[RMDB]
RNA sequence: GGGAACGACUCGAGUAGAGUCGAAAAGUUAUAUGGCCCCGUUGAUCCUACUUUCUUACACAGAUUCUAUUCACUUAAGGCUGCAGUCCAUGGGUGGAAGAUGGUUGUGUGUGAUAAGGUACGUUCUCCAAACAUAAUUGUUCGCAAUUAUGUUUGGAAAAGAAACAACAACAACAAC
Reactivity to DMS in 0.01 (KOAc 150mM, MgCl2 10mM, bicine 150mM(pH8.5), 24C), signal-to-noise 3, nucleotides 027 to 126: g020u010u010a090u020a100u010g020g000c020c010c010c080g010u010u000g010a080u010c050c060u000a040c030u010u000u000c070u000u000a020c020a020c010a080g000a120u010u000c010u000a150u010u000c010a030c010u000u010a080a090g020g010c040u020g020c200a150g020u020c000c010a080u020g000g000g020u000g000g000a010a030g000a040u010g010g010u010u000g020u000g020u010g000u000g000a030u000a030a040g000g020u010a050c170g010u000u000c060u000
Reactivity to 2A3 in 0.01 (KOAc 150mM, MgCl2 10mM, bicine 150mM(pH8.5), 24C), signal-to-noise 3, nucleotides 027 to 126: g020u050u020a160u040a090u300g130g010c000c010c010c000g030u030u110g030a060u040c000c000u010a030c000u030u040u030c010u030u060a010c010a000c010a030g040a080u060u000c010u080a300u010u010c000a010c020u040u020a060a010g030g000c010u160g140c210a020g040u000c000c000a050u070g020g000g000u010g000g010a010a010g030a020u050g000g080u120u100g100u020g010u010g020u010g000a030u020a070a020g010g010u030a020c040g020u030u030c010u020